RNA sequence: GGGAACGACUCGAGUAGAGUCGAAAAGGGAAAAAGUUCGCUUUUUCCCAAAUAAAAUCAGCGGUUAAAAAGCUCCGCUUAUAACCGGUGAAGCGGAGCUUAAAAGUGAGGUGUUCGCACCUCACAACAAAUGUGUCAACUUCGGUUGACACAUUUGAAAAGAAACAACAACAACAAC
Reactivity to DMS in 0.01 (KOAc 150mM, MgCl2 10mM, bicine 150mM(pH8.5), 24C), signal-to-noise 1, nucleotides 027 to 126: g020g000g020a040a000a000a000a020g000u010u000c240g010c000u010u000u010u000u000c000c010c020a020a070a050u000a100a040a050a050u020c080a070g010c050g000g030u000u010a080a050a110a070a060g020c000u000c020c020g000c020u000u000a090u000a130a140c140c150g000g010u010g000a010a020g000c020g010g000a020g020c020u000u000a030a040a090a130g010u000g000a000g000g030u000g010u000u000c170g010c000a000c000c010u000c000a010c000a070a160